An RNA of 177 nucleotides, treated with DMS and read out base by base.
Source: RMDB library TTRINS, as collected in RNAgym.
The RNA was probed in 150 mM KOAc, 10 mM MgCl2 and 150 mM bicine (pH 8.5) at 24 C.
Reactivities are given for positions 27 through 126.
[RMDB]
RNA sequence: GGGAACGACUCGAGUAGAGUCGAAAAGAUAUGGAGUCGCUGAAGCUGGAGCUCCCUGAGGGACCGUGGUCGGAAACGACCACUAGUACCUCCUGGAGCGUUGAAAGCUUCAGCGACUCCUAAGUCACAUCUACUAAGAGUUCGCUCUUAGUAGAUGAAAAGAAACAACAACAACAAC
Reactivity to DMS in 0.01 (KOAc 150mM, MgCl2 10mM, bicine 150mM(pH8.5), 24C), signal-to-noise 4, nucleotides 027 to 126: g010a060u000a300u020g000g010a010g010u000c000g000c000u000g010a030a020g010c010u000g000g000a110g010c000u000c000c000c030u010g000a020g010g000g010a070c300c210g000u000g000g010u020c000g000g010a130a130a240c000g010a010c000c000a000c000u000a030g030u000a150c000c000u000c000c020u000g000g000a010g030c010g030u000u020g000a130a160a030g010c010u000u000c000a000g020c010g030a000c000u000c000c000u000a010a060g000u000c050a280